Chemical mapping of a 207-nucleotide RNA with DMS and 2A3. The 2A3 profile rests on 5,895 reads. The reactions ran in a buffer of 150 mM KOAc, 10 mM MgCl2 and 150 mM bicine (pH 8.5), at 24 C. In probing experiments dimethyl sulfate is read out at A N1 and C N3, which are open when not base-paired.

[RMDB]
RNA sequence: GGGAACGACUCGAGUAGAGUCGAAAACUACGUUCGAUCAUUGCCUAGCUGGUCGAAAAGAGAUUUAUAGGCUCGCAUAUAGAAGGCUUGAGUUAUGUGUCGCCUAUCUGUUAAAUGAAAGACAUAACCUAUGGUCGUAGACGAAUAUGUUGGCAGACUGUAGUCAUUGGUUCGCCAAUGACUACAGAAAAGAAACAACAACAACAAC
Reactivity to DMS in 0.01 (KOAc 150mM, MgCl2 10mM, bicine 150mM(pH8.5), 24C), signal-to-noise 2, nucleotides 027 to 156: c010u010a190c020g000u000u000c030g010a010u000c010a030u000u010g010c000c000u000a050g050c300u000g000g010u000c000g000a010a010a070a040g020a300g000a120u010u000u010a090u000a070g000g020c010u020c040g000c030a050u000a040u000a080g030a090a050g010g040c030u010u010g030a140g010u000u000a010u000g040u000g050u000c040g000c050c000u000a020u000c060u000g000u010u000a110a050a100u000g020a130a050a080g000a030c020a030u000a060a020c010c020u000a110u010g000g030u000c030g030u000a100g000a100c080g020a080a110u010a080u000g040u000u000g010g010c070a090g010a170
Reactivity to 2A3 in 0.01 (KOAc 150mM, MgCl2 10mM, bicine 150mM(pH8.5), 24C), signal-to-noise 6, nucleotides 027 to 156: c040u050a010c010g020u000u020c000g000a000u000c000a020u020u260g000c010c000u010a010g000c010u010g000g010u000c020g000a000a010a000a000g070a000g030a040u110u260u190a050u080a010g000g000c000u000c010g000c010a010u030a000u010a040g050a050a010g010g000c000u050u060g090a080g110u020u010a010u020g020u000g010u030c020g000c000c000u010a020u000c050u010g030u030u030a030a090a090u240g140a070a020a000g120a020c010a010u000a020a000c000c010u050a110u160g100g000u070c060g130u120a060g040a100c050g020a060a050u160a080u160g020u020u010g020g010c030a020g050a100